[RMDB]
RNA sequence: GGGAACGACUCGAGUAGAGUCGAAAAUGAACCCAGGCUGCGCUUAGGGAUUGUAGAGAAUAUCAACAUGACAAAGCGAUCGGGAAUGAUGAAGCUUACGGGAAACAAUCCUUAUUGAGGCGAAAAAGGGUAAAUUAUACUUCGGUAUAAUUUACCCAAAAGAAACAACAACAACAAC
Reactivity to DMS in 0.01 (KOAc 150mM, MgCl2 10mM, bicine 150mM(pH8.5), 24C), signal-to-noise 6, nucleotides 027 to 126: u030g000a130a210c000c000c000a140g000g000c070u040g000c020g000c030u000u010a040g010g000g000a020u000u010g010u000a080g010a160g010a120a060u030a090u020c070a100a120c120a080u020g010a160c100a030a070a080g040c060g020a040u010c050g000g020g030a130a100u030g010a020u010g000a100a120g000c020u010u020a090c170g000g000g000a150a100a030c010a010a000u000c000c000u000u000a030u020u010g000a090g000g010c010g000a070a060a090a100a090
Reactivity to 2A3 in 0.01 (KOAc 150mM, MgCl2 10mM, bicine 150mM(pH8.5), 24C), signal-to-noise 4, nucleotides 027 to 126: u220g010a040a030c000c000c000a020g080g120c050u140g020c030g010c050u000u040a010g010g020g020a020u000u000g030u110a020g020a020g050a200a100u110a040u250c120a080a090c010a070u120g080a030c040a030a080a000g020c010g060a040u010c010g110g050g040a120a200u200g080a020u010g100a130a020g010c010u040u050a020c030g080g000g030a070a070a030c000a010a030u000c010c000u010u000a050u050u060g010a000g030g000c000g010a110a050a000a020a000